RNA sequence: GGGAACGACUCGAGUAGAGUCGAAAAGCGGGACCGGUGCCUGGUACGAAUCCUGGGGUCGUCGUUGUACUCGUGCGAGUAAUCCACGAUCGCUACAACGCGCUAAGCAAUGGAGAUGAUUCUUGAGCAUCUCUGUGUUUUUCGAAACACAGAGAUGAAAAGAAACAACAACAACAAC
Reactivity to DMS in 0.01 (KOAc 150mM, MgCl2 10mM, bicine 150mM(pH8.5), 24C), signal-to-noise 5, nucleotides 027 to 126: g010c040g010g000g000a080c060c030g020g010u010g000c050c030u000g000g010u020a080c070g000a100a100u000c020c010u010g000g000g000g020u010c010g000u020c020g000u010u000g000u000a010c020u000c010g000u010g000c170g010a040g000u040a110a120u000c000c000a010c010g010a020u020c180g000c090u000a010c010a020a020c020g010c070g010c120u000a050a110g010c110a080a100u010g020g010a140g010a090u010g000a100u000u000c020u000u000g010a180g020
Reactivity to 2A3 in 0.01 (KOAc 150mM, MgCl2 10mM, bicine 150mM(pH8.5), 24C), signal-to-noise 6, nucleotides 027 to 126: g040c010g000g020g020a040c040c000g050g060u110g050c010c020u070g010g040u070a060c040g060a050a030u040c000c010u050g000g030g010g000u060c020g030u060c020g000u000u020g000u010a000c000u000c020g010u030g030c150g000a040g020u120a050a190u040c000c000a000c000g000a030u150c090g000c040u020a010c000a010a020c010g000c000g010c030u070a050a030g020c030a050a130u140g060g010a100g010a080u110g030a070u030u010c010u010u030g040a040g100